[RMDB]
RNA sequence: GGGAACGACUCGAGUAGAGUCGAAAAUGCUAGGCUGGGAAGAGCUCGACCACAGGUGUGGGGUUUUGUCUCCAGUGACAUUCCCAGCUGGCUCUUGCAGCCCCUGCCCUAGUGACAGCAUGGGGUGAGGGGGCCAGAGGAGGCUGGAGGUGGAGCCGAUCUAUCCAGCAUUCGUGCUGGAUAGAUCAAAAGAAACAACAACAACAAC
Reactivity to 2A3 in 0.01 (KOAc 150mM, MgCl2 10mM, bicine 150mM(pH8.5), 24C), signal-to-noise 2, nucleotides 027 to 156: u110g000c030u020a030g030g000c010u020g020g000g050a050a040g030a040g050c070u070c090g100a050c020c010a030c050a140g210g060u110g050u060g090g040g010g000u010u030u020u030g020u000c000u000c030c020a020g000u040g040a030c010a090u070u080c010c000c010a010g030c010u000g000g000c000u010c010u020u070g040c100a020g020c010c000c000c000u030g000c010c000c000u140a200g100u090g200a070c030a020g050c010a050u300g010g010g000g010u020g010a070g000g030g000g000g000c000c000a010g000a000g030g050a020g030g010c010u000g000g000a030g000g020u040g030g010a000g000c060c040

This 207-nucleotide RNA was probed chemically with 2A3. The 2A3 profile rests on 1,533 reads. Reactivities are given for positions 27 through 156.